An RNA of 177 nucleotides, treated with 2A3 and DMS and read out base by base. It was measured as part of the RMDB library TTRDEL. For DMS, 1,427 sequencing reads were counted.
RNA sequence: GGGAACGACUCGAGUAGAGUCGAAAAGAUAUGGACGCCACAUGGAGUCCCUCGGAAACGAGAAGGACGUUGAAAUGUUGCGUCCUAAGUCAAAAUCGGAACGCACAGUUCGCUGUGCGUUCCGAAACUCCAGAUGUAAGUUCGCUUACAUCUGGAGAAAAGAAACAACAACAACAAC
Reactivity to 2A3 in 0.01 (KOAc 150mM, MgCl2 10mM, bicine 150mM(pH8.5), 24C), signal-to-noise 1, nucleotides 027 to 126: g000a020u080a050u130g000g000a000c020g010c000c060a000c010a020u010g000g020a030g010u010c000c030c020u000c000g040g040a140a080a070c050g000a010g110a280a290g000g000a010c020g160u280u030g010a010a000a010u020g000u020u000g000c000g000u010c010c000u020a010a000g030u020c000a010a020a010a300u040c010g020g000a000a000c000g130c040a000c020a030g040u180u150c190g080c200u010g000u000g080c030g020u000u000c000c000g000a010a000a000
Reactivity to DMS in 0.01 (KOAc 150mM, MgCl2 10mM, bicine 150mM(pH8.5), 24C), signal-to-noise 1, nucleotides 027 to 126: g010a100u010a300u000g000g000a000c010g010c000c070a020c030a040u000g000g020a110g000u000c000c000c010u000c020g000g020a060a090a230c000g000a000g000a190a050g030g010a010c000g000u000u000g040a140a130a030u000g010u000u000g000c010g020u000c000c000u000a010a060g000u000c050a110a060a100a140u000c000g030g000a000a000c000g080c000a000c020a000g010u000u010c160g000c000u000g010u000g020c000g020u020u000c000c010g010a000a000a150